Structure probing data (DMS and 2A3) for a 177-nucleotide construct. The reactions ran in a buffer of 150 mM KOAc, 10 mM MgCl2 and 150 mM bicine (pH 8.5), at 24 C.

RNA sequence: GGGAACGACUCGAGUAGAGUCGAAAAAUAAAUAGCGUAAUGGACAUUGGGAGUGUACGCUAAGUGUGUGUUGUAUAGCUAACGUCCAAUUGAACACACACACAGUUGGACCUAAUGUCCAAAAAAAACUAGCAUUGAGUUUCGACUCAAUGCUAGUAAAAGAAACAACAACAACAAC
Reactivity to DMS in 0.01 (KOAc 150mM, MgCl2 10mM, bicine 150mM(pH8.5), 24C), signal-to-noise 2, nucleotides 027 to 126: a030u000a010a080a070u000a050g020c010g030u020a070a130u000g000g000a030c000a010u000u010g010g020g020a240g010u000g030u000a040c050g000c000u000a040a110g030u000g000u020g010u010g000u000u020g000u000a060u000a050g010c090u010a090a070c160g020u000c070c000a070a090u000u000g010a030a020c020a000c000a020c030a000c000a040c120a130g010u010u010g010g000a160c020c040u000a020a000u000g000u000c000c000a000a000a000a100a030a030a020
Reactivity to 2A3 in 0.01 (KOAc 150mM, MgCl2 10mM, bicine 150mM(pH8.5), 24C), signal-to-noise 1, nucleotides 027 to 126: a000u300a030a070a090u080a020g020c020g040u080a070a050u090g000g020a000c000a000u000u000g010g010g040a160g150u170g090u150a020c040g000c010u010a050a110g010u000g010u000g000u000g000u070u060g050u070a090u070a070g030c040u090a170a040c060g060u070c090c000a020a050u040u130g030a060a010c000a000c030a000c020a000c000a000c010a030g130u130u140g060g030a050c010c010u000a000a000u020g020u010c000c060a130a000a000a000a000a000a000
Notes
For 2A3, 1,065 sequencing reads were counted. 2A3 adducts were read by reverse transcription with SuperScript II with manganese.